[RMDB]
RNA sequence: GGGAACGACUCGAGUAGAGUCGAAAACUUGCAAGCAGUCUUUGGACAGAAGGGAUCUAUUCAUACUGUACAAUACAUCCUGCACCCUGGUGCUGUUUACAACUCUCUGAGGUCUUGAGGGUGCCUGCACGGUAGGUGAGUUCGCUCACCUACCGUGAAAAGAAACAACAACAACAAC
Reactivity to 2A3 in 0.01 (KOAc 150mM, MgCl2 10mM, bicine 150mM(pH8.5), 24C), signal-to-noise 2, nucleotides 027 to 126: c010u050u090g020c040a030a040g000c020a080g150u000c040u040u060u050g050g020a050c020a060g060a050a010g040g010g020a030u010c030u090a140u120u060c060a050u110a260c050u100g030u090a030c060a030a040u060a090c020a040u050c000c020u040g000c010a020c000c010c050u140g030g000u010g030c050u030g030u120u080u050a050c060a070a050c030u000c020u020c050u070g060a070g020g140u080c000u090u080g050a020g000g000g010u010g000c010c000u030g000
Reactivity to DMS in 0.01 (KOAc 150mM, MgCl2 10mM, bicine 150mM(pH8.5), 24C), signal-to-noise 4, nucleotides 027 to 126: c050u000u010g020c050a050a030g000c030a020g020u000c070u010u000u000g030g010a010c010a050g010a300a070g010g000g010a070u000c130u010a120u000u010c080a060u010a110c120u000g000u010a060c140a060a040u010a090c190a070u000c040c040u010g010c040a050c040c030c070u020g020g010u010g020c030u000g000u010u000u010a050c110a060a080c110u000c010u000c030u010g020a200g010g010u000c060u000u010g010a010g000g000g020u000g000c010c080u010g000

Conditions: 150 mM KOAc, 10 mM MgCl2 and 150 mM bicine (pH 8.5), 24 C. This 177-nucleotide RNA was probed chemically with 2A3 and DMS. For 2A3 the reverse transcriptase was SuperScript II with manganese. For DMS the reverse transcriptase was MarathonRT. For 2A3, 2,643 sequencing reads were counted. Source: RMDB library OK2TRN, as collected in RNAgym.